[RMDB]
RNA sequence: GGGAACGACUCGAGUAGAGUCGAAAAUGAAGCUCCCCCGACACUAUGGAGCCGAGUCACAAAGUUUGGAUCAGGAUGGGGCUUUUGGGUCAGCCCGACAGUGUUCAUCACAACCACACAUGUAGUGCCCCAUUUAAUCAUUCGUGAUUAAAUGGGGAAAAGAAACAACAACAACAAC
Reactivity to DMS in 0.01 (KOAc 150mM, MgCl2 10mM, bicine 150mM(pH8.5), 24C), signal-to-noise 5, nucleotides 027 to 126: u050g000a150a130g030c010u010c010c000c000c030c030g000a120c120a060c160u020a060u020g010g010a090g030c030c040g000a120g000u000c040a110c080a080a150a130g000u000u000u000g010g010a060u030c130a110g010g010a030u020g000g000g000g010c020u020u000u030u000g010g000g000u010c120a150g000c020c010c020g010a020c070a040g010u000g000u030u000c020a050u000c030a060c100a130a090c080c020a060c100a090c050a110u030g010u010a080g010u010g000
Reactivity to 2A3 in 0.01 (KOAc 150mM, MgCl2 10mM, bicine 150mM(pH8.5), 24C), signal-to-noise 4, nucleotides 027 to 126: u150g030a050a010g020c010u020c000c000c000c000c010g090a040c040a040c100u110a110u190g040g010a000g000c000c020g040a030g070u080c020a010c040a080a140a030g020u050u060u060g080g010a110u110c090a060g030g030a030u040g030g000g000g000c000u050u040u030u040g040g000g030u100c080a080g170c040c010c000g010a010c010a010g010u040g070u120u040c010a030u030c000a010c020a110a060c030c000a020c000a010c010a070u120g060u140a060g030u060g090
Chemical mapping of a 177-nucleotide RNA with DMS and 2A3.
For 2A3 the reverse transcriptase was SuperScript II with manganese.
The 2A3 profile rests on 12,195 reads.
The reactions ran in a buffer of 150 mM KOAc, 10 mM MgCl2 and 150 mM bicine (pH 8.5), at 24 C.
The DMS profile rests on 8,883 reads.
Reactivities are given for positions 27 through 126.
Source: RMDB library OK1LIB, as collected in RNAgym.